[RMDB]
RNA sequence: GGGAACGACUCGAGUAGAGUCGAAAAACGGGAAGAACGCUGGCGUAAACACUGGGCGGAGGCAGAGGAACGCGACCGCUGGAAUGCAGAGGUGGAGAAGCGCAAGGACGACCGCCAGCGCCGCCGUAACGAAAAGAGAGCACGCGGAUGAAUGACCAUAUAACUCACAAUUCGUUGUGAGUUAUAUAAAAGAAACAACAACAACAAC
Reactivity to 2A3 in 0.01 (KOAc 150mM, MgCl2 10mM, bicine 150mM(pH8.5), 24C), signal-to-noise 4, nucleotides 027 to 156: a000c030g000g020g010a070a050g040a130a010c010g010c030u020g010g000c010g020u080a080a110a010c050a040c120u080g030g040g000c020g030g010a030g040g000c030a030g030a040g050g030a070a020c040g010c030g070a040c030c030g020c060u030g020g060a100a020u100g020c060a020g020a030g060g020u050g010g040a070g020a030a010g030c020g000c030a030a010g040g000a010c050g030a040c010c030g000c000c000a010g000c000g000c000c000g030c000c010g000u040a070a020c040g070a040a010a060a080g040a010g010a010g020c050a010c060g020c040g000g030a020u060g030a100a070u080g030a040c020c050
Reactivity to DMS in 0.01 (KOAc 150mM, MgCl2 10mM, bicine 150mM(pH8.5), 24C), signal-to-noise 3, nucleotides 027 to 156: a080c020g020g030g020a110a070g000a090a050c020g010c020u000g030g010c000g030u000a080a120a050c070a080c050u010g030g000g020c050g010g010a080g010g010c060a070g010a090g020g010a090a080c060g010c060g020a080c040c020g030c020u000g050g000a080a100u000g000c050a080g010a060g010g050u010g000g020a090g010a080a080g030c050g020c050a070a110g020g000a110c030g000a090c160c010g020c020c000a040g010c030g020c030c020g010c020c010g000u000a100a140c070g000a060a070a050a110g010a090g000a080g000c020a020c050g020c000g010g010a120u010g000a100a100u010g010a090c060c070

Chemical mapping of a 207-nucleotide RNA with 2A3 and DMS. The reactions ran in a buffer of 150 mM KOAc, 10 mM MgCl2 and 150 mM bicine (pH 8.5), at 24 C. For 2A3 the reverse transcriptase was SuperScript II with manganese. Values cover nucleotides 27 to 156. High 2A3 reactivity points to a flexible backbone, as in loops and unpaired stretches. DMS adducts were read by reverse transcription with MarathonRT. It was measured as part of the RMDB library OK3TST. The DMS profile rests on 7,451 reads.